[RMDB]
About this RNA:
Source: RMDB library OK2TST, as collected in RNAgym. Chemical mapping of a 177-nucleotide RNA with DMS. For DMS the reverse transcriptase was MarathonRT. The DMS profile rests on 2,240 reads.
RNA sequence: GGGAACGACUCGAGUAGAGUCGAAAAUUUUGCUGUUCCAGUCAGUUUGCCGUCUGGUCCGGCGCGGUGCGCGUGUCCACGUCAACAAUGACGCUGAGGCCCGCACGGAUCUUGCCGGAUUCAAAUAUAUACGCCGUAAUUUCGAUUACGGCGUAUAAAAAGAAACAACAACAACAAC
Reactivity to DMS in 0.01 (KOAc 150mM, MgCl2 10mM, bicine 150mM(pH8.5), 24C), signal-to-noise 2, nucleotides 027 to 126: u000u010u000u010g020c020u000g010u000u000c050c060a020g010u010c070a060g000u000u010u010g030c040c070g020u030c060u020g010g010u000c010c000g010g000c010g020c090g010g020u000g010c000g000c200g020u010g010u000c000c030a080c000g010u000c000a070a120c300a140a170u000g000a010c000g010c280u010g010a130g010g030c010c010c000g020c000a010c000g000g000a100u010c080u000u000g020c030c010g010g000a050u010u000c050a050a090a100u000a100